[RMDB]
RNA sequence: GGGAACGACUCGAGUAGAGUCGAAAAGACGAUCACACUAAUAUCAGAAAGGCUUUCUGUUGUGAUUACAGGACAACCAGGAGGUUUAAGGGGAAAGUACGUAGACGGCCAGACGUACUCAAAGGAACAUAGCUGACCUGUUCGCAGGUCAGCUAUGAAAAGAAACAACAACAACAAC
Reactivity to 2A3 in 0.01 (KOAc 150mM, MgCl2 10mM, bicine 150mM(pH8.5), 24C), signal-to-noise 3, nucleotides 027 to 126: g080a010c040g050a020u040c000a000c000a000c070u190a060a140u110a120u230c000a000g160a110a070a020g140g050c060u020u060u000c000u040g070u110u030g020u000g020a070u070u050a000c030a010g080g150a030c020a000a020c000c050a030g000g050a070g050g000u020u090u170a050a040g010g030g020g000a000a250a000g010u020a030c000g000u010a040g050a160c030g020g020c020c000a010g000a040c030g000u000a000c020u020c060a060a050a040g070g000a070a030
Reactivity to DMS in 0.01 (KOAc 150mM, MgCl2 10mM, bicine 150mM(pH8.5), 24C), signal-to-noise 3, nucleotides 027 to 126: g000a110c090g030a050u000c010a020c020a130c200u050a100a110u030a040u030c040a000g010a020a060a110g010g010c050u000u010u000c020u010g000u010u030g030u010g020a010u000u010a090c160a090g000g000a110c110a080a080c040c050a100g010g010a090g000g030u020u000u030a090a130g000g000g010g000a090a110a030g000u000a010c030g030u010a040g000a140c050g010g000c030c000a160g000a010c010g030u000a010c020u000c120a050a040a060g000g000a140a150
This 177-nucleotide RNA was probed chemically with 2A3 and DMS. The 2A3 profile rests on 1,645 reads. 2A3 adducts were read by reverse transcription with SuperScript II with manganese. The reactions ran in a buffer of 150 mM KOAc, 10 mM MgCl2 and 150 mM bicine (pH 8.5), at 24 C. It was measured as part of the RMDB library OK1LIB.